This 207-nucleotide RNA was probed chemically with 2A3. The 2A3 profile rests on 951 reads.
RNA sequence: GGGAACGACUCGAGUAGAGUCGAAAAAUCCACUGUUGCAACUACUUAUAGUUGCCAAUGACGACCAAUACGGUGCUGCUCUCGCUGCUUAAUUGCAGCUGACAUGCACUCCUGGUACCUUCGGGUCCAGCAAUCAUCAGGGGAUGUCUGUAAACCCACCUGUCAUACGGUUCGCCGUAUGACAGGUAAAAGAAACAACAACAACAAC
Reactivity to 2A3 in 0.01 (KOAc 150mM, MgCl2 10mM, bicine 150mM(pH8.5), 24C), signal-to-noise 2, nucleotides 027 to 156: a000u000c020c010a000c030u060g060u100u110g010c000a020a000c000u070a040c010u150u300a170u070a300g000u000u000g000c030c000a070a110u140g050a040c110g070a080c010c020a160a030u150a120c100g000g000u010g000c010u000g000c050u000c030u060c060g000c010u020g030c000u050u110a130a070u300u200g000c000a000g000c010u000g000a000c000a010u230g000c000a000c000u020c000c010u020g010g010u100a060c020c000u040u030c210g050g000g010u000c000c000a020g000c040a080a030u120c020a040u030c020a050g030g010g000g030a050u120g040u130c100u080g100u070a090a100a110c000c000c000
It was measured as part of the RMDB library ARCHII. Values are in units of 0.01, from 0 to 300, in steps of 10.